[RMDB]
RNA sequence: GGGAACGACUCGAGUAGAGUCGAAAAUUCGGUCCUGUGGAGCGGACCGUUUGCUCCGUCAGGAUGUGGAGGUUUCGCGCCCUCCUGUGCGCGUAUGUACAUCGAUACGGUUAUGUCGCCUUUGUGUCGGCGUUUGACACUUACACAUACCGGAUAACAUGACGUAUCCGUUCGCGGAUACGUCAUGAAAAGAAACAACAACAACAAC
Reactivity to 2A3 in 0.01 (KOAc 150mM, MgCl2 10mM, bicine 150mM(pH8.5), 24C), signal-to-noise 1, nucleotides 027 to 156: u020u000c000g030g000u000c000c000u050g020u050g030g140a050g040c110g000g170a080c080c000g030u100u000u070g000c020u000c010c000g190u040c010a000g050g040a000u070g050u040g050g020a000g000g000u020u040u130c000g000c000g000c000c000c010u040c000c020u080g030u130g050c010g040c000g030u010a050u100g070u100a110c050a300u090c050g000a040u010a240c000g030g050u040u110a080u010g100u080c020g040c000c040u040u110u220g040u020g020u050c000g030g060c080g040u030u000u000g120a010c020a000c000u000u050a020c050a010c020a020u100a110c000c000g000g020a020u220a090a090